Conditions: 150 mM KOAc, 10 mM MgCl2 and 150 mM bicine (pH 8.5), 24 C. This 177-nucleotide RNA was probed chemically with DMS and 2A3.
RNA sequence: GGGAACGACUCGAGUAGAGUCGAAAAUAAAGAGUGCGUAACAGCUCACCCGCCGAGACUCGGGGCGCCGAAAAUGGACGGGGCUCAAGCCGGCCGCCGAUACCCCGGGGCUCCGAAAGGAGAUCCGCCGUAAGUUAAUCUUCGGAUUAACUUACGGAAAAGAAACAACAACAACAAC
Reactivity to DMS in 0.01 (KOAc 150mM, MgCl2 10mM, bicine 150mM(pH8.5), 24C), signal-to-noise 3, nucleotides 027 to 126: u040a060a080a110g010a060g000u000g000c080g010u030a090a110c170a210g010c010u000c050a110c010c010c050g010c060c020g000a100g010a090c020u020c030g020g000g000g000c100g000c020c000g000a060a060a150a090u040g010g010a160c030g030g000g000g040c050u000c090a100a130g010c100c060g000g010c020c020g020c040c000g000a100u020a130c030c020c110c000g020g010g000g000c010u000c010c000g010a070a110a090g010g010a070g000a040u010c010c100g020
Reactivity to 2A3 in 0.01 (KOAc 150mM, MgCl2 10mM, bicine 150mM(pH8.5), 24C), signal-to-noise 6, nucleotides 027 to 126: u210a010a090a030g070a010g040u090g000c060g050u060a110a050c020a080g010c000u010c020a040c010c000c000g000c020c010g070a070g040a080c030u020c040g010g010g020g000c050g080c010c010g070a120a070a010a050u140g020g020a020c010g010g000g020g010c020u020c090a050a040g060c050c020g020g000c000c000g060c010c010g030a040u140a150c010c000c000c000g000g000g010g000c000u000c000c000g060a050a020a010g030g000a030g010a020u020c000c020g010